[RMDB]
RNA sequence: GGGAACGACUCGAGUAGAGUCGAAAAUUAUGUCUUACUGCAGAUGUAUUAGGUGAAUGUACUCAAGCUUCCUGUUCAAAUUCUGCUACUACCAUCAUGAGAUUAACAGAAAAUGGGGUUGAGAAAGGAUCGGGCUUAAUUUCGAUUAAGCCCGAUCAAAAGAAACAACAACAACAAC
Reactivity to 2A3 in 0.01 (KOAc 150mM, MgCl2 10mM, bicine 150mM(pH8.5), 24C), signal-to-noise 2, nucleotides 027 to 126: u120u060a050u180g040u040c050u040u170a180c080u110g020c010a000g020a060u150g060u070a050u100u080a090g020g030u070g060a080a020u120g010u130a070c000u040c130a070a040g060c040u000u010c010c020u020g090u110u020c020a030a000a150u030u000c010u060g030c000u000a010c000u030a070c030c070a020u090c010a070u050g060a020g020a200u060u160a090a030c100a100g070a040a060a000a030u040g020g000g090g010u030u050g060a070g090a150a060a030g100
Reactivity to DMS in 0.01 (KOAc 150mM, MgCl2 10mM, bicine 150mM(pH8.5), 24C), signal-to-noise 1, nucleotides 027 to 126: u020u020a020u020g000u000c010u000u050a190c300u040g000c090a020g040a020u020g000u000a000u000u000a110g000g020u000g000a040a000u060g050u000a060c000u010c140a070a140g000c020u020u020c040c000u000g000u030u000c070a030a020a080u000u000c060u000g000c030u000a020c050u030a000c060c030a030u010c090a080u020g000a180g000a030u000u020a130a110c040a160g020a040a040a020a110u000g000g010g000g010u000u000g000a060g000a170a040a130g000